[RMDB]
Structure probing data (2A3) for a 207-nucleotide construct. It was measured as part of the RMDB library ARCHII.
RNA sequence: GGGAACGACUCGAGUAGAGUCGAAAAGCUUAAGAAGAGGAUUUACAGACUAGCGUUUUAAUGAAGCCCCGACAUACGGCGUCUUAUUUCGCGAAAUUUAAGUAGUAUGAAUAUGAAUGUAGAUGUCAUGGUGGCGACAUGCUUGGACGCGGGUUCGCCCACAUAUGCCCUUCGGGGCAUAUGUGGGAAAAGAAACAACAACAACAAC
Reactivity to 2A3 in 0.01 (KOAc 150mM, MgCl2 10mM, bicine 150mM(pH8.5), 24C), signal-to-noise 1, nucleotides 027 to 156: g010c040u080u070a130a000g070a010a030g030a130g110g040a040u140u070u140a100c060a030g050a050c040u040a010g060c030g000u020u020u070u300a080a030u130g000a000a000g000c000c000c010c020g000a000c000a000u270a130c040g030g030c000g010u030c040u020u010a070u000u090u130c050g040c000g010a010a090a120u300u300u120a130a000g000u030a000g000u000a080u300g000a040a000u010a010u150g040a150a040u030g000u030a030g010a030u000g000u030c040a100u140g010g060u020g130g000c000g000a000c000a000u080g070c070u070u080g010g020a010c040g010c020g070g000g040u090u090c080g060